[RMDB]
RNA sequence: GGGAACGACUCGAGUAGAGUCGAAAAAUUAAUAAAGCAGAUAAACGCCCGACAAUAUCGAAAUAGCGAUCGAUGUAUUUUGCAUGUUUGUAACGCAAAUGAUCAUGUGAAAAUUUCAUCAAGAUCAUGAUAGGCUAUUAUUCGUAAUAGCCUAUCAAAAAGAAACAACAACAACAAC
Reactivity to DMS in 0.01 (KOAc 150mM, MgCl2 10mM, bicine 150mM(pH8.5), 24C), signal-to-noise 4, nucleotides 027 to 126: a110u010u010a080a080u000a080a110a130g010c070a100g020a060u000a050a130a130c180g000c030c010c010g000a130c190a060a150u000a050u010c040g000a090a110a080u010a090g020c140g000a030u000c010g000a020u000g020u000a050u010u010u000u010g000c000a020u000g000u000u010u000g010u020a060a070c240g010c290a040a070a050u000g000a020u000c010a010u010g030u000g010a020a020a040a090u010u020u000c000a000u000c020a080a110g010a010u000c020a080
Reactivity to 2A3 in 0.01 (KOAc 150mM, MgCl2 10mM, bicine 150mM(pH8.5), 24C), signal-to-noise 2, nucleotides 027 to 126: a020u110u060a000a060u120a050a220a000g010c070a020g010a080u110a060a140a050c050g060c000c050c000g090a080c070a020a170u070a040u200c020g110a140a040a160u070a070g130c090g050a000u000c020g020a000u010g000u050a020u010u000u000u060g020c000a000u010g110u040u040u070g100u070a140a020c090g000c210a020a190a060u030g000a010u060c010a000u010g070u050g060a010a000a030a020u150u210u120c000a000u030c020a020a120g110a010u100c020a000